Chemical mapping of a 177-nucleotide RNA with 2A3 and DMS. The DMS profile rests on 1,301 reads. DMS adducts were read by reverse transcription with MarathonRT. Reactivities are given for positions 27 through 126. DMS (dimethyl sulfate) methylates the pairing face of unpaired adenines and cytosines.

RNA sequence: GGGAACGACUCGAGUAGAGUCGAAAAGUAAACAAAUACGGGUCCUGCUUAGGAGAAAAGAAAAACGUCUUACAGCCAGUGUCUAAACUCCAAACAACGGAAUGUAUCAAUGAGACCUUGUAUAUGGUGAUGUGGUAUCGUUCGCGAUACCACAUCAAAAAGAAACAACAACAACAAC
Reactivity to 2A3 in 0.01 (KOAc 150mM, MgCl2 10mM, bicine 150mM(pH8.5), 24C), signal-to-noise 2, nucleotides 027 to 126: g050u050a000a150a000c100a060a070a000u100a000c010g000g100g000u030c000c050u000g030c060u030u000a100g000g010a030g050a010a300a000a000g070a000a120a100a000a000c020g140u130c010u060u110a080c030a020g030c000c000a000g040u000g000u040c000u000a010a040a040c000u000c010c000a000a020a010c060a070a150c020g000g190a150a000u130g010u070a100u190c070a060a080u070g000a110g000a130c020c000u040u120g000u050a030u000a120u080g040g010
Reactivity to DMS in 0.01 (KOAc 150mM, MgCl2 10mM, bicine 150mM(pH8.5), 24C), signal-to-noise 1, nucleotides 027 to 126: g000u000a040a070a110c080a010a040a030u030a050c000g000g020g000u000c030c050u000g000c040u000u040a030g000g000a000g000a080a140a100a130g000a000a030a020a020a040c240g000u000c010u000u000a190c070a100g000c020c040a080g000u010g000u000c000u000a010a000a100c030u000c010c010a130a090a020c110a090a020c060g000g110a020a000u000g000u010a070u010c170a020a050u000g000a160g000a020c000c000u000u000g050u050a070u000a070u020g000g120